[RMDB]
RNA sequence: GGGAACGACUCGAGUAGAGUCGAAAAGAUAUGGAAUGAACUACAGCGAACUGGUUCGUUGAAAUCGGAAACGAUGGAGAACCAUCCCGCUGCAUUCCUAAGUCAAACCUUACCUUCGGGUAAGGAACAGAAUUCUUAACUUCGGUUAAGAAUUCUGAAAAGAAACAACAACAACAAC
Reactivity to 2A3 in 0.01 (KOAc 150mM, MgCl2 10mM, bicine 150mM(pH8.5), 24C), signal-to-noise 2, nucleotides 027 to 126: g020a020u040a020u170g000g000a010a020u010g000a050a050c130u180a080c300a000g000c010g040a070a010c090u030g000g050u020u000c030g030u190u050g000a050a030a000u010c010g000g000a050a040a020c010g020a010u010g000g030a040g010a020a010c000c000a010u030c040c030c000g010c010u020g000c000a010u010u010c000c000u000a100a000g020u000c020a000a080a180c010c000u000u000a000c000c000u030u060c300g080g000g010u000a000a010g020g000a000a010
Reactivity to DMS in 0.01 (KOAc 150mM, MgCl2 10mM, bicine 150mM(pH8.5), 24C), signal-to-noise 3, nucleotides 027 to 126: g010a040u000a300u010g020g000a000a010u000g000a080a090c130u030a300c010a010g000c010g010a050a130c210u010g000g010u000u000c000g000u000u030g000a050a140a020u000c000g010g000a100a090a150c020g010a020u000g010g000a110g010a010a010c010c010a030u000c090c100c010g000c000u000g000c000a020u000u020c010c010u000a040a120g000u000c030a100a140a200c010c000u000u000a000c000c000u000u010c140g030g000g010u010a000a010g000g010a040a100
Structure probing data (2A3 and DMS) for a 177-nucleotide construct. Conditions: 150 mM KOAc, 10 mM MgCl2 and 150 mM bicine (pH 8.5), 24 C. The data come from the RNA Mapping Database (RMDB), library TTRDEL. High DMS reactivity at an A or C suggests that its Watson-Crick edge is free.